RNA sequence: GGGAACGACUCGAGUAGAGUCGAAAACUUGAUUUUCUUCUUCGCCUUCCGGAGCUCCUUCUCGAGAUCCUCAGCUUUUUUCCUUGAGUUCACCCACUGCUCGAGGACGUCUUCCCUUCCCCCGCGACCCCCACUCACUUCGGUGAGUGGAAAAGAAACAACAACAACAAC
Reactivity to DMS in 0.01 (KOAc 150mM, MgCl2 10mM, bicine 150mM(pH8.5), 24C), signal-to-noise 2, nucleotides 027 to 129: c090u040u060g030a030u000u010u010u000c000u000u000c080u000u030c090g030c080c060u020u030c050c050g040g000a120g000c080u020c000c000u030u030c040u030c040g010a120g000a130u000c060c040u030c000a070g020c000u040u010u020u020u050u030c020c050u000u000g020a080g020u000u000c080a130c070c030c040a170c090u030g000c050u030c010g000a040g040g020a080c000g020u010c090u050u020c000c000c000u010u000c060c010c000c020c020g050c090g020a070c000c000c000
Reactivity to 2A3 in 0.01 (KOAc 150mM, MgCl2 10mM, bicine 150mM(pH8.5), 24C), signal-to-noise 8, nucleotides 027 to 129: c030u040u080g040a080u160u050u040u030c040u050u010c010u040u030c020g030c030c020u020u050c030c010g020g010a040g020c010u020c030c020u090u060c060u040c030g080a080g010a070u050c010c000u020c030a040g020c050u060u060u040u020u090u050c020c010u040u070g040a030g060u080u060c030a120c010c010c000a040c040u020g000c000u000c010g010a010g020g040a100c010g020u010c100u060u030c010c000c000u020u040c000c000c000c000c000g010c010g030a060c000c010c010